[RMDB]
RNA sequence: GGGAACGACUCGAGUAGAGUCGAAAAUAUGCUAAGUGCCAGGGUUAAAUAUAUAGUCACUACCCUUGAGGUAUUCGUAGCUUAAAAGAAGAGAUAGCUAUGUUAGCAGGCAAAUCUGAAACAGUGACUGAUUUACACAGAGCUCAGAGGCUGUGGAUCACCACUGGGUGUUCGCACCCAGUGGUGAAAAAGAAACAACAACAACAAC
Reactivity to 2A3 in 0.01 (KOAc 150mM, MgCl2 10mM, bicine 150mM(pH8.5), 24C), signal-to-noise 2, nucleotides 027 to 156: u290a090u130g000c020u040a040a070g040u020g050c020c030a010g000g010g040u060u100a050a170a050u220a020u020a030u050a070g030u000c020a030c040u040a030c000c040c000u010u120g140a060g110g010u090a050u040u120c000g020u000a000g000c000u040u060a050a150a070a110g120a020a060g030a030g030a090u090a060g000c000u000a000u020g020u070u040a030g000c060a030g080g010c020a080a150a060u100c120u270g000a040a040a000c020a040g000u000g000a000c000u040g000a000u020u060u130a060c050a000c010a010g000a030g050c010u030c120a030g020a020g130g000c010u000g000u050g060g090a040
Structure probing data (2A3) for a 207-nucleotide construct. For 2A3, 772 sequencing reads were counted. The reactions ran in a buffer of 150 mM KOAc, 10 mM MgCl2 and 150 mM bicine (pH 8.5), at 24 C.